[RMDB]
RNA sequence: GGGAACGACUCGAGUAGAGUCGAAAAAGGGAGGUGACCAAGGAUAUGAAAGUUGCAGUUGCUGAUAACAACAGCACAUUCUCUUUCGUGUUCCCUGACGAACACAUUGACCUCGAGGGAAAGGGAAUCCACGGAUAUCUUUCGAGAUAUCCGUGGAAAAAGAAACAACAACAACAAC
Reactivity to 2A3 in 0.01 (KOAc 150mM, MgCl2 10mM, bicine 150mM(pH8.5), 24C), signal-to-noise 4, nucleotides 027 to 126: a000g080g020g020a100g010g030u060g050a030c080c010a010a050g040g000a020u020a020u090g030a050a000a000g100u280u030g030c110a030g000u100u050g000c040u010g020a130u110a300a020c130a060a010c000a020g060c010a010c030a040u190u030c000u010c000u000u000u000c030g000u030g030u050u100c020c000c030u020g050a040c070g040a170a010c030a000c030a130u070u180g090a090c030c010u000c030g000a080g000g020g000a090a110a050g020g060g030a020a030
Reactivity to DMS in 0.01 (KOAc 150mM, MgCl2 10mM, bicine 150mM(pH8.5), 24C), signal-to-noise 6, nucleotides 027 to 126: a060g020g000g010a070g010g010u010g010a110c080c050a070a060g000g010a060u020a040u000g000a010a020a050g010u030u010g000c240a070g030u010u000g010c000u000g010a080u030a100a180c300a140a110c020a010g000c000a010c090a100u020u010c010u000c000u020u000u000c030g000u010g010u000u000c000c000c060u030g010a210c180g010a080a040c120a070c140a110u010u030g020a120c050c020u000c060g010a130g000g000g010a050a020a010g000g000g020a100a100